[RMDB]
RNA sequence: GGGAACGACUCGAGUAGAGUCGAAAAAGGUUCGCUGUGGUGCAACUCUUAUUAGUAACUAAUCCAAAGCAAGUGUAGGAGAACAGGUUUUUAACUAUUUUUAGGCAGAUAAAAAAUAGUAUUUGACAAAAUCGAUUGUCGUUCGCGACAAUCGAAACUUAUCUAGUUGCUUCGGCAACUAGAUAAGAAAAGAAACAACAACAACAAC
Reactivity to DMS in 0.01 (KOAc 150mM, MgCl2 10mM, bicine 150mM(pH8.5), 24C), signal-to-noise 1, nucleotides 027 to 156: a110g010g020u000u000c060g080c000u000g020u000g000g020u000g000c010a070a120c020u000c030u000u000a110u000u000a090g020u000a080a110c050u000a110a120u000c050c030a010a080a110g000c050a050a110g020u000g020u000a060g030g030a080g000a080a130c030a160g000g000u000u000u000u000u030a060a110c000u000a020u000u000u000u000u000a060g020g010c100a060g000a130u020a000a000a040a000a040a020u000a020g000u000a170u010u010u000g020a170c030a040a090a080a120u000c000g000a050u000u000g020u010c010g010u000u000c300g000c000g010a020c000a020a030u010c000g020a020a010a040
Reactivity to 2A3 in 0.01 (KOAc 150mM, MgCl2 10mM, bicine 150mM(pH8.5), 24C), signal-to-noise 3, nucleotides 027 to 156: a000g020g020u050u050c000g000c010u000g030u030g070g040u040g010c010a040a050c010u030c060u140u100a140u100u050a100g070u050a070a050c030u030a070a100u040c050c040a090a040a020g020c020a040a060g000u030g020u090a030g020g040a040g020a050a030c040a050g000g050u010u000u010u060u030a040a010c000u000a010u020u000u000u010u010a020g030g030c040a050g040a100u130a050a050a000a010a000a000u020a020g030u030a130u060u060u090g060a040c040a030a170a030a060u000c000g000a000u000u000g000u010c000g000u020u070c260g000c000g060a000c000a000a000u000c010g000a010a000a000

Description
The record gives the reactivity of an RNA of 207 nucleotides to DMS and 2A3. Source: RMDB library M2RFPK, as collected in RNAgym. As a SHAPE reagent, 2A3 marks flexible, mostly unpaired nucleotides at the ribose 2'-OH. The 2A3 profile rests on 1,939 reads.